RNA sequence: GGGAACGACUCGAGUAGAGUCGAAAAUUAUCCGGUAACUAUCGUCUUGAGUCCAACACGACUUAACGGGUUGGCAUGGAUUGUAGGCGCCGCCCUAUACCUUGUCUGCCUCCCCGCGGUGCAUGGAUAGCCAGGAUACGUUCGCGUAUCCUGGCUAAAAAGAAACAACAACAACAAC
Reactivity to DMS in 0.01 (KOAc 150mM, MgCl2 10mM, bicine 150mM(pH8.5), 24C), signal-to-noise 1, nucleotides 027 to 126: u010u010a090u000c040c000g000g000u000a080a170c070u020a020u010c070g020u000c090u000u000g040a080g000u000c040c110a110a150c050a090c050g000a130c230u000u030a100a100c070g010g010g020u000u000g000g000c020a040u020g000g000a090u000u000g000u000a070g040g000c140g010c060c100g000c150c070c010u000a040u000a020c070c020u000u010g000u000c010u000g000c000c000u000c030c000c000c240g020c070g000g010u000g000c090a120u000g000g010a160
The record gives the reactivity of an RNA of 177 nucleotides to DMS. It was measured as part of the RMDB library OK2TRN.